This 177-nucleotide RNA was probed chemically with DMS and 2A3. The data come from the RNA Mapping Database (RMDB), library RFMREP. The 2A3 profile rests on 26,309 reads. The reactions ran in a buffer of 150 mM KOAc, 10 mM MgCl2 and 150 mM bicine (pH 8.5), at 24 C. For DMS the reverse transcriptase was MarathonRT.
RNA sequence: GGGAACGACUCGAGUAGAGUCGAAAAAAAGUAGAGGUAGGUGCGAGAAAUGACGGAACCUCACAAAUCAUCGUUCAUUGUCUCGCAGCUGCUUCAACUGUGAAAUCGUGGCAGUUCGCUGCCACGACAUCAGUCAAUAGUUCGCUAUUGACUGAUGAAAAGAAACAACAACAACAAC
Reactivity to DMS in 0.01 (KOAc 150mM, MgCl2 10mM, bicine 150mM(pH8.5), 24C), signal-to-noise 7, nucleotides 027 to 126: a070a050a010g010u000a090g020a020g000g010u000a010g010g000u000g010c000g010a020g010a070a020a020u000g000a030c000g010g000a070a090c180c090u000c280a110c270a080a080a050u000c120a100u010c020g010u010u000c000a010u000u010g010u000c000u000c010g010c000a010g000c010u000g000c010u000u000c010a050a010c030u000g000u010g000a070a070a120u000c000g030u000g000g010c000a010g020u000u010c220g020c000u000g000c000c000a000c000g010a010
Reactivity to 2A3 in 0.01 (KOAc 150mM, MgCl2 10mM, bicine 150mM(pH8.5), 24C), signal-to-noise 9, nucleotides 027 to 126: a000a000a000g030u040a020g000a010g020g000u020a000g050g150u000g000c000g000a000g000a010a000a000u010g000a000c020g020g030a050a060c030c060u170c070a070c090a060a100a040u120c070a040u090c030g180u210u050c060a020u030u100g220u220c020u000c010g000c000a010g040c000u000g000c000u000u000c000a000a010c010u030g040u060g160a070a100a050u020c000g000u000g000g000c000a010g010u030u060c150g040c100u000g000c000c000a000c000g000a000